[RMDB]
RNA sequence: GGGAACGACUCGAGUAGAGUCGAAAAGUAGUACAAUGGAAGAAGAUUUUCUUAGUAUGGAUACUACACUCUUCAUCCAAAAGUAUGGUCUUGAGGAUUAUGGUUUUGAACACGUUGUAUUUGGAGAUGUCUCUAAAACUACCAUUGGUGGUAUGCACGAAGUGAGAGCAUUCGUGCUCUCACUUCGAAAAGAAACAACAACAACAAC
Reactivity to 2A3 in 0.01 (KOAc 150mM, MgCl2 10mM, bicine 150mM(pH8.5), 24C), signal-to-noise 1, nucleotides 027 to 156: g030u070a010g020u000a020c000a060a140u050g000g030a050a040g020a010a020g000a140u200u180u150u000c050u060u110a060g060u020a060u090g070g010a030u020a110c050u030a030c020a020c070u010c020u000u030c000a040u060c020c010a080a000a060a000g040u020a080u200g060g000u000c000u030u080g030a010g010g020a000u100u000a020u060g060g020u000u050u020u070g090a050a070c060a020c100g050u030u010g020u100a180u010u070u110g040g000a030g040a050u100g060u000c020u000c000u030a010a020a130a090c030u040a070c010c010a090u010u110g070g010u000g000g010u060a070u090g040c020a020